[RMDB]
RNA sequence: GGGAACGACUCGAGUAGAGUCGAAAAUGGUUAAGGAACUCGGCACAAUGGCCCCGUAACUUCGGGAGAAGGGGUGCCCCCGCGUACGUGAACCGGCUCGCCCGGGGAGCGGAGGGGGGCCGCAGUGCUCUCUUAAUCGUUUCGACGAUUAAGAGAGAAAAGAAACAACAACAACAAC
Reactivity to DMS in 0.01 (KOAc 150mM, MgCl2 10mM, bicine 150mM(pH8.5), 24C), signal-to-noise 5, nucleotides 027 to 126: u030g000g000u000u020a060a070g010g020a100a070c040u000c050g010g030c050a060c140a090a100u010g010g000c010c000c000c010g010u010a140a170c050u000u020c090g020g010g030a090g010a070a100g010g000g010g020u010g010c000c010c000c010c000g020c160g030u000a140c010g010u000g000a300a260c000c000g000g010c030u030c280g010c140c010c000g000g000g000g010a300g010c010g000g010a160g010g000g000g000g000g020c010c120g010c140a060g000u010g010
Reactivity to 2A3 in 0.01 (KOAc 150mM, MgCl2 10mM, bicine 150mM(pH8.5), 24C), signal-to-noise 5, nucleotides 027 to 126: u140g040g000u090u070a060a040g040g000a030a010c010u020c030g010g000c030a020c040a150a200u180g140g020c010c000c000c000g020u040a020a050c010u060u090c160g060g030g010a030g020a030a020g000g000g000g030u080g000c010c000c000c000c000g040c020g030u110a050c010g020u040g020a030a020c000c000g010g000c060u150c210g060c040c000c000g010g010g000g040a010g010c010g000g000a070g020g000g000g000g000g000c000c000g000c030a030g010u040g040
An RNA of 177 nucleotides, treated with DMS and 2A3 and read out base by base.
In probing experiments dimethyl sulfate is read out at A N1 and C N3, which are open when not base-paired.
It was measured as part of the RMDB libraries RFM100 and RFMREP.
DMS adducts were read by reverse transcription with MarathonRT.